[RMDB]
RNA sequence: GGGAACGACUCGAGUAGAGUCGAAAAGAAAGAAAGAAAAACUCGUCGUCACGUACGAAAAGCGUGGAAGUACGAAAGUGACGGUAGGAAACUACCGACGAGGAACCACGCUGAAAAGAAAAGAAAAGGGUAACUGAUACUUCGGUAUCAGUUACCCAAAAGAAACAACAACAACAAC
Reactivity to DMS in 0.01 (KOAc 150mM, MgCl2 10mM, bicine 150mM(pH8.5), 24C), signal-to-noise 1, nucleotides 027 to 126: g030a120a060a130g020a190a060a080g000a090a120a050a100a080c000u000c050g020u010c150g020u010c000a030c050g000u000a040c100g000a110a000a100a040g000c000g000u020g000g000a050a100g010u020a080c020g030a120a090a220g000u000g000a050c040g000g020u000a000g020g000a180a140a140c000u020a000c000c000g030a210c000g000a040g000g000a040a060c010c000a000c000g050c000u000g000a020a020a040a080g000a030a070a110a040g020a050a140a100a020
This 177-nucleotide RNA was probed chemically with DMS. Conditions: 150 mM KOAc, 10 mM MgCl2 and 150 mM bicine (pH 8.5), 24 C. Values cover nucleotides 27 to 126.